Conditions: 150 mM KOAc, 10 mM MgCl2 and 150 mM bicine (pH 8.5), 24 C. Chemical mapping of a 177-nucleotide RNA with DMS. For DMS, 950 sequencing reads were counted.

RNA sequence: GGGAACGACUCGAGUAGAGUCGAAAAGAAGGCUCCUUCGGGAGCCUUCAAACUGGUGUCCCGACCAGGCUGGAUGUCAAUCCCUGUAGUCAUAGAUCGGGAAAAGUUGCAACUUCGGUUGCAACAAGGGAAAGUAUUGGUUCGCCAAUACUUUCCCAAAAGAAACAACAACAACAAC
Reactivity to DMS in 0.01 (KOAc 150mM, MgCl2 10mM, bicine 150mM(pH8.5), 24C), signal-to-noise 1, nucleotides 027 to 126: g000a020a000g000g000c000u000c000c010u000u010c180g070g000g000a010g000c000c000u000u000c000a020a090a150c020u000g000g000u000g020u000c000c020c000g000a090c030c010a030g010g010c110u000g020g020a060u010g010u010c190a190a090u000c010c010c120u000g000u010a090g010u000c060a120u020a150g030a090u000c060g000g020g000a010a040a130a050g000u000u000g000c010a010a010c000u000u010c260g020g000u010u020g010c000a000a000c000a130a130

Background: The data come from the RNA Mapping Database (RMDB), library M2PK50.